The data come from the RNA Mapping Database (RMDB), library M2RFPK.
The record gives the reactivity of an RNA of 207 nucleotides to DMS and 2A3.
The 2A3 profile rests on 2,853 reads.
Values are in units of 0.01, from 0 to 300, in steps of 10.
The reactions ran in a buffer of 150 mM KOAc, 10 mM MgCl2 and 150 mM bicine (pH 8.5), at 24 C.
The DMS profile rests on 2,894 reads.
DMS adducts were read by reverse transcription with MarathonRT.
Reactivities are given for positions 27 through 156.
RNA sequence: GGGAACGACUCGAGUAGAGUCGAAAAAGAUCCACGCUACGGCGUGGAUCACAGGUUCAUCCCUAUUGGGACGGAAGUAGGCAUAGUGCCGAAGGAACGCAUUAGUCAUGCGCUACGGCGCAUGACACACAUCAGAGUCACUUCGGUGACUCUGAAAGAUUACACCAUGGUUCGCCAUGGUGUAAUCAAAAGAAACAACAACAACAAC
Reactivity to DMS in 0.01 (KOAc 150mM, MgCl2 10mM, bicine 150mM(pH8.5), 24C), signal-to-noise 1, nucleotides 027 to 156: a090g000a010u000c020c000a000c000g030c000u000a070c280g130g000c000g070u000g010g000a000u000c000a020c090a080g010g000u000u010c010a090u000c000c010c000u000a220u000u010g010g030g000a050c020g000g020a050a110g040u000a090g000g060c030a190u000a100g000u010g010c000c010g000a090a140g030g000a060a080c060g000c030a090u000u000a100g030u020c010a020u010g000c000g080c000u000a090c260g110g000c000g040c000a000u000g000a010c000a000c040a060c050a120u000c000a010g010a030g010u000c000a010c000u000u010c280g070g070u000g000a040c010u010c000u000g000a000a020a060
Reactivity to 2A3 in 0.01 (KOAc 150mM, MgCl2 10mM, bicine 150mM(pH8.5), 24C), signal-to-noise 4, nucleotides 027 to 156: a000g000a020u000c000c000a000c000g020c000u040a060c250g130g010c000g000u000g000g010a010u000c000a000c000a000g030g010u070u060c040a040u050c020c000c010u100a250u160u300g010g000g040a020c050g030g060a100a050g040u040a020g000g000c010a110u120a200g130u150g140c010c000g000a020a010g060g020a050a020c040g010c140a120u070u180a060g010u010c000a000u020g000c000g010c010u020a050c300g100g000c010g000c000a000u000g000a000c010a000c020a000c010a070u030c000a000g000a000g000u010c000a000c000u030u100c160g070g000u000g000a000c000u000c000u000g000a000a000a000